Annotation
Source: RMDB libraries RFM100 and RFMREP, as collected in RNAgym. This 177-nucleotide RNA was probed chemically with 2A3 and DMS. For 2A3 the reverse transcriptase was SuperScript II with manganese. High DMS reactivity at an A or C suggests that its Watson-Crick edge is free. The RNA was probed in 150 mM KOAc, 10 mM MgCl2 and 150 mM bicine (pH 8.5) at 24 C.
RNA sequence: GGGAACGACUCGAGUAGAGUCGAAAAGACUGAACAGACGUGUGAACAGUUUGAGUGUGGUAGCGCUGUGUGAGUUGGCGGUGGAACCCCCUCGUGGUGACACGAGCCCCCGUGGCCAAAAGCCCAGCUAGGCAUAUCCAUUCGUGGAUAUGCCUAGAAAAGAAACAACAACAACAAC
Reactivity to 2A3 in 0.01 (KOAc 150mM, MgCl2 10mM, bicine 150mM(pH8.5), 24C), signal-to-noise 5, nucleotides 027 to 126: g010a010c030u060g020a070a020c020a040g200a070c070g040u080g030u030g090a050a010c030a090g070u070u100u100g140a120g030u070g000u040g020g060u070a050g010c030g000c050u010g010u030g040u030g090a080g030u040u090g030g010c040g020g030u030g020g000a050a050c000c000c020c000c000u020c000g020u040g000g020u080g020a010c010a000c020g000a010g010c010c010c000c000c020g070u120g000g020c000c010a030a050a010a000g000c000c000c000a010g030
Reactivity to DMS in 0.01 (KOAc 150mM, MgCl2 10mM, bicine 150mM(pH8.5), 24C), signal-to-noise 6, nucleotides 027 to 126: g010a080c030u010g010a110a100c040a030g000a070c100g020u010g020u010g020a090a100c040a050g010u000u000u020g010a090g020u010g010u000g000g020u010a080g010c070g000c020u000g000u010g000u010g000a080g010u000u010g000g010c070g000g010u000g010g010a060a190c030c010c010c070c000u010c020g020u000g000g000u050g000a200c020a010c010g000a030g010c030c020c010c020c050g010u020g010g030c010c030a030a060a120a210g000c010c010c060a110g010